[RMDB]
Record summary:
This 177-nucleotide RNA was probed chemically with 2A3. The RNA was probed in 150 mM KOAc, 10 mM MgCl2 and 150 mM bicine (pH 8.5) at 24 C. Reactivities are given for positions 27 through 126.
RNA sequence: GGGAACGACUCGAGUAGAGUCGAAAAUCGACAUACAGCCCAAGCAGGUUCUUAUAGAAUUUCUUCACCACGACAGCAUAUUGUCCUUCAUCAAAAUAGUGCAGCGUAUGCCUAGGAAACGAGAACAGGUGUACAACCACUUCGGUGGUUGUACACCAAAAGAAACAACAACAACAAC
Reactivity to 2A3 in 0.01 (KOAc 150mM, MgCl2 10mM, bicine 150mM(pH8.5), 24C), signal-to-noise 2, nucleotides 027 to 126: u040c010g010a020c020a020u070a030c140a030g030c000c000c000a010a020g030c060a040g060g040u090u040c020u130u250a180u040a130g090a090a030u070u060u040c000u040u020c020a030c080c000a000c040g030a100c040a000g010c000a000u010a060u150u170g010u100c000c020u020u120c000a140u110c070a060a130a060a000u110a060g050u080g000c000a020g000c030g060u150a040u030g000c000c000u080a070g000g120a080a040a000c080g070a000g040a110a080c050a010